RNA sequence: GGGAACGACUCGAGUAGAGUCGAAAAAUCAUCAUUUGCAACAAUUCCUAUUAUCGCAUCAUUAUUCAUUCCUUUUGGAGCGUCAAUUGGACUAGAUACAAUGGCAUUAAUCGCAUUGAUUGGAACAGGAGUAGGUGGAGUUCGCUCCACCUACUCCAAAAGAAACAACAACAACAAC
Reactivity to 2A3 in 0.01 (KOAc 150mM, MgCl2 10mM, bicine 150mM(pH8.5), 24C), signal-to-noise 2, nucleotides 027 to 126: a000u060c050a030u020c000a020u170u000u140g050c050a130a020c020a090a150u000u060c010c010u060a090u130u010a020u040c120g000c090a020u050c010a000u090u130a100u120u140c010a030u000u080c000c000u040u040u090u070g050g040a070g070c060g040u030c040a120a140u020u070g020g020a000c010u030a070g000a040u060a130c110a060a040u120g030g000c000a010u000u080a120a080u130c070g000c130a050u000u080g050a130u040u130g060g000a000a050c040a150